[RMDB]
RNA sequence: GGGAACGACUCGAGUAGAGUCGAAAAUCGGUGCAGAUAAGUUUAAUUCAUUUGGUGGUGUCUUAACCGGCCUAGGAAGAUCAUUUGUUUUACCUAAAAAAGAAGGUGUGGCACUUGAUAUCUUUGAUGAUAGUUCUUAUUUGAGAGAGCUUAGUACCCUCUACGUCUACUUCGGUAGACGUAGAGGAAAAGAAACAACAACAACAAC
Reactivity to 2A3 in 0.01 (KOAc 150mM, MgCl2 10mM, bicine 150mM(pH8.5), 24C), signal-to-noise 2, nucleotides 027 to 156: u010c020g020g020u020g010c040a000g010a090u050a050a060g060u060u040u120a160a160u190u130c120a090u160u020u170g040g000u010g010g030u040g020u070c030u030u100a090a080c050c030g010g000c020c010u000a020g040g020a040a010g010a050u030c000a060u030u030u040g050u010u060u000u060a080c010c000u100a060a100a080a060a000a000g110a070a030g000g000u000g010u000g060g000c010a000c000u000u000g000a000u020a010u140c020u100u120u050g060a070u070g030a010u040a070g020u000u050c030u100u030a220u070u130u120g060a100g020a010g000a020g010c030u040u040a020g010u170a130c050
Reactivity to DMS in 0.01 (KOAc 150mM, MgCl2 10mM, bicine 150mM(pH8.5), 24C), signal-to-noise 1, nucleotides 027 to 156: u000c010g000g040u000g030c040a040g000a100u000a030a100g020u010u020u000a060a140u010u000c100a120u000u000u020g010g000u000g010g010u010g060u000c060u000u000a100a100c050c020g010g070c000c040u010a080g030g010a140a040g010a070u000c040a090u000u010u020g000u000u000u000u000a080c080c050u010a000a030a150a140a120a080g000a100a070g010g010u010g040u040g020g000c010a010c060u000u000g000a090u000a100u000c040u000u000u010g020a070u010g010a040u010a090g040u000u020c010u000u000a120u000u010u000g000a150g010a120g020a070g020c020u000u010a160g010u010a200c100